[RMDB]
RNA sequence: GGGAACGACUCGAGUAGAGUCGAAAAGAAGAAAGGCGGACCGCCAGCCCGAGGCGGAGGCGGAAUUAACCGCCAGGCGGACGCGCACGGGCAGGGGGAGCGCGAGGGGGACCGCCACCGCCAAAAAGGGAUAUCUAAUCUUCGGAUUAGAUAUCCCAAAAGAAACAACAACAACAAC
Reactivity to 2A3 in 0.01 (KOAc 150mM, MgCl2 10mM, bicine 150mM(pH8.5), 24C), signal-to-noise 2, nucleotides 027 to 126: g170a050a010g040a020a160a050g000g000c000g030g000a060c000c000g000c000c000a050g030c000c000c000g050a080g020g000c000g020g000a020g000g000c000g020g070a040a040u300u130a280a110c010c000g020c010c000a010g010g000c000g000g010a030c020g010c010g000c010a030c040g000g040g030c040a070g050g040g030g000g030a130g020c060g010c000g000a040g000g010g010g010g000a000c000c010g000c000c000a030c000c000g000c000c000a070a070a000a000a000